This 177-nucleotide RNA was probed chemically with DMS and 2A3. Conditions: 150 mM KOAc, 10 mM MgCl2 and 150 mM bicine (pH 8.5), 24 C. Values cover nucleotides 27 to 126. Source: RMDB library M2PK90, as collected in RNAgym.
RNA sequence: GGGAACGACUCGAGUAGAGUCGAAAAACAUAGUUUGGCCGACGUCAUACCAUUGAAGACGAAUCGUUAAAGACACCAGCUCCUCUUAUAGGAGCCCAUUUAGCAAAAACAGUCCUGUAGGAACCAACAUGUUAACGGGAUUCGUCCCGUUAACAUGAAAAGAAACAACAACAACAAC
Reactivity to DMS in 0.01 (KOAc 150mM, MgCl2 10mM, bicine 150mM(pH8.5), 24C), signal-to-noise 3, nucleotides 027 to 126: a080c090a060u000a070g010u010u000u000g020g010c040c000g000a090c080g000u000c050a050u010a080c070c050a060u010u000g010a070a100g000a060c040g000a070a040u010c100g000u010u000a020a030a080g000a110c070a060c090c130a120g020c010u000c010c010u000c210u020u000a080u020a020g010g000a030g010c010c020c070a050u000u000u000a050g000c040a030a040a110a080a050c080a120g010u000c020c040u000g000u010a060g000g000a040a110c070c070a030a190
Reactivity to 2A3 in 0.01 (KOAc 150mM, MgCl2 10mM, bicine 150mM(pH8.5), 24C), signal-to-noise 2, nucleotides 027 to 126: a000c010a030u160a060g060u030u030u100g040g000c010c010g020a040c010g010u050c030a040u070a140c030c030a090u030u160g070a080a000g040a050c030g020a010a060u080c040g010u020u050a050a030a000g060a020c030a000c040c050a020g000c000u010c000c000u070c050u110u200a160u180a250g000g010a000g000c000c000c000a020u030u010u060a000g010c000a000a000a000a000a150c010a020g020u010c010c020u050g070u090a060g000g080a040a060c020c000a020a070